[RMDB]
Structure probing data (DMS and 2A3) for a 177-nucleotide construct.
The reactions ran in a buffer of 150 mM KOAc, 10 mM MgCl2 and 150 mM bicine (pH 8.5), at 24 C.
2A3 adducts were read by reverse transcription with SuperScript II with manganese.
RNA sequence: GGGAACGACUCGAGUAGAGUCGAAAACGGUGUGGCUGCCGUAAGCCGAGACCGGGUCUGGUCCUCGACUGGCUCGGACGACACCCCGACAGUGAGCCAUUGCUGAGCAUCGUGGUUGGGGACAGCCCUCUCGUCCGUACUUCGGUACGGACGAGAGAAAAGAAACAACAACAACAAC
Reactivity to DMS in 0.01 (KOAc 150mM, MgCl2 10mM, bicine 150mM(pH8.5), 24C), signal-to-noise 1, nucleotides 027 to 126: c060g040g020u010g030u020g020g020c070u000g010c000c000g010u000a090a080g000c010c000g020a120g010a170c050c060g020g000g000u000c020u020g000g020u000c030c050u020c150g000a020c000u000g000g030c030u020c000g030g020a120c060g010a030c110a170c000c010c000c000g030a050c110a090g000u020g010a090g020c000c050a130u000u000g010c190u010g000a070g000c040a090u010c090g040u030g000g040u000u010g000g000g000g020a040c040a070g010c030c040
Reactivity to 2A3 in 0.01 (KOAc 150mM, MgCl2 10mM, bicine 150mM(pH8.5), 24C), signal-to-noise 1, nucleotides 027 to 126: c000g000g000u020g020u060g050g000c020u000g000c010c000g040u030a000a050g070c000c010g010a040g030a140c040c080g040g000g060u040c090u140g080g080u070c030c060u080c080g020a000c000u030g030g010c000u010c040g050g030a050c020g030a000c000a080c020c000c000c000g010a020c000a080g090u050g100a000g000c030c050a080u080u230g030c090u100g050a070g070c030a220u050c030g050u060g040g040u030u010g000g000g000g000a030c050a010g000c000c030